[RMDB]
RNA sequence: GGGAACGACUCGAGUAGAGUCGAAAAGGUAAUGAGUUCGCUCAUUACCAAAGAAAGCGUGCUAGUGUGAGCGCACAGACUAGCACGGCGCAAAGAAAGAAAAAAGAACCUGGUUCGCCAGGUUCAAGAUUCAAUGAUUGUUCGCAAUCAUUGAAUCAAAAGAAACAACAACAACAAC
Reactivity to DMS in 0.01 (KOAc 150mM, MgCl2 10mM, bicine 150mM(pH8.5), 24C), signal-to-noise 4, nucleotides 027 to 126: g010g010u010a000a010u000g000a010g020u000u020c250g020c000u000c000a000u010u000a000c000c010a050a060a080g010a140a110a100g010c020g010u000g010c000u000a010g000u000g000u000g010a110g030c170g000c170a090c030a040g000a030c010u010a010g000c010a010c010g010g030c110g000c140a050a080a110g000a060a110a180g020a010a080a100a070a140a120g000a010a000c010c000u000g010g000u000u020c220g010c010c000a000g010g000u000u000c000a030a060
Reactivity to 2A3 in 0.01 (KOAc 150mM, MgCl2 10mM, bicine 150mM(pH8.5), 24C), signal-to-noise 4, nucleotides 027 to 126: g000g010u000a000a000u010g010a000g030u030u080c130g070c080u000c000a000u000u010a000c000c000a000a000a000g020a010a040a010g080c010g000u000g000c010u010a010g000u070g010u030g130a110g130c100g020c120a030c010a090g130a010c010u000a000g000c000a000c020g040g010c110g000c040a100a130a020g100a070a130a020g040a050a190a020a030a010a030g010a000a000c000c000u010g000g000u020u030c140g030c030c000a000g000g000u010u000c000a000a000
Description: Chemical mapping of a 177-nucleotide RNA with DMS and 2A3. For 2A3 the reverse transcriptase was SuperScript II with manganese. The reactions ran in a buffer of 150 mM KOAc, 10 mM MgCl2 and 150 mM bicine (pH 8.5), at 24 C. As a SHAPE reagent, 2A3 marks flexible, mostly unpaired nucleotides at the ribose 2'-OH.